[RMDB]
RNA sequence: GGGAACGACUCGAGUAGAGUCGAAAAACAAGAAGUGUGGCACCAACAUCUGCUUCUGAUGAGGGCCUCAGGCUGCUUCCACUCAUGGAGGAAGGUGAAGGGGAGCUGGCAUGUGCAGAGAUCACAUGGAAAGAGAGGAAGCAAGAGAGAGAGUGGGGACCUUUGUUUCUUUCGAGAAACAAAGGUCAAAAGAAACAACAACAACAAC
Reactivity to 2A3 in 0.01 (KOAc 150mM, MgCl2 10mM, bicine 150mM(pH8.5), 24C), signal-to-noise 2, nucleotides 027 to 156: a010c030a050a040g050a070a050g030u020g010u080g120g000c060a160c120c010a060a070c040a040u010c000u030g030c060u140u020c030u110g070a070u110g020a040g010g030g020c020c010u070c060a020g060g000c040u010g000c000u100u080c010c030a030c070u090c000a020u070g080g010a040g050g030a070a050g070g000u050g010a060a060g010g000g000g010a010g000c090u070g070g000c020a020u080g010u030g010c070a020g100a040g010a240u120c000a010c000a030u030g060g040a020a090a000g040a000g000a010g010g000a010a010g030c030a080a000g070a000g000a000g000a000g000a010g020u050g020g020g040